RNA sequence: GGGAACGACUCGAGUAGAGUCGAAAAGAUCCGCGGACAAGGAGGACGUGCGAUUAGCAAGCUUGGUUUCUGGAGUGUUGUUAUGCUUGGUAUCAACUCGAUAAUCGGAGCGGGUAUCUUCAUGACACUGCAGUCAUCGUUUCGACGAUGACUGCAGAAAAGAAACAACAACAACAAC
Reactivity to DMS in 0.01 (KOAc 150mM, MgCl2 10mM, bicine 150mM(pH8.5), 24C), signal-to-noise 1, nucleotides 027 to 126: g020a120u000c010c050g030c120g000g000a000c060a110a150g020g010a110g000g080a060c050g000u000g000c120g000a030u010u000a020g040c010a110a140g040c110u030u000g000g000u000u010u000c020u030g020g000a140g010u000g010u000u010g030u000u000a040u000g010c230u000u000g010g010u000a020u000c020a040a020c010u000c000g010a080u010a090a070u010c170g010g000a000g010c300g000g010g010u010a010u010c050u000u000c030a000u000g000a060c070a090
Reactivity to 2A3 in 0.01 (KOAc 150mM, MgCl2 10mM, bicine 150mM(pH8.5), 24C), signal-to-noise 1, nucleotides 027 to 126: g040a030u080c000c000g100c000g000g000a030c050a090a070g210g010a050g010g000a030c010g030u010g000c130g050a070u000u090a040g100c090a080a040g040c000u140u100g050g030u030u090u000c020u050g040g110a030g070u140g090u080u090g010u050u040a030u030g060c110u020u010g000g030u010a020u000c010a040a000c000u010c000g080a140u230a300a100u300c030g140g010a000g030c000g050g000g000u000a010u000c000u010u030c000a010u030g000a000c010a000
Source information:
This 177-nucleotide RNA was probed chemically with DMS and 2A3. In probing experiments dimethyl sulfate is read out at A N1 and C N3, which are open when not base-paired. For DMS, 796 sequencing reads were counted. DMS adducts were read by reverse transcription with MarathonRT. The reactions ran in a buffer of 150 mM KOAc, 10 mM MgCl2 and 150 mM bicine (pH 8.5), at 24 C.